[RMDB]
RNA sequence: GGGAACGACUCGAGUAGAGUCGAAAAACGUGAUCGAUGCCGAUACCGCGCAGCUCAUUGCCGAGGAAUUCGGCCAUACUGUCAAGCGCGUUGCUGAAUCGGACGUGGAAGAAGGCAUCUUCGACGAAGUAGUACCGCACUUCGGUGCGGUACUACUAAAAGAAACAACAACAACAAC
Reactivity to DMS in 0.01 (KOAc 150mM, MgCl2 10mM, bicine 150mM(pH8.5), 24C), signal-to-noise 1, nucleotides 027 to 126: a130c010g010u000g040a010u030c110g050a030u000g000c020c010g000a130u000a060c030c060g010c060g010c030a110g000c160u030c020a040u000u000g030c030c030g010a010g000g000a070a250u000u000c010g010g000c000c180a040u020a070c080u000g000u000c150a070a100g050c000g040c060g000u010u000g000c040u000g000a180a100u020c060g000g000a170c030g010u000g000g010a020a070g000a180a190g030g000c110a130u000c010u000u010c010g000a040c010g000a060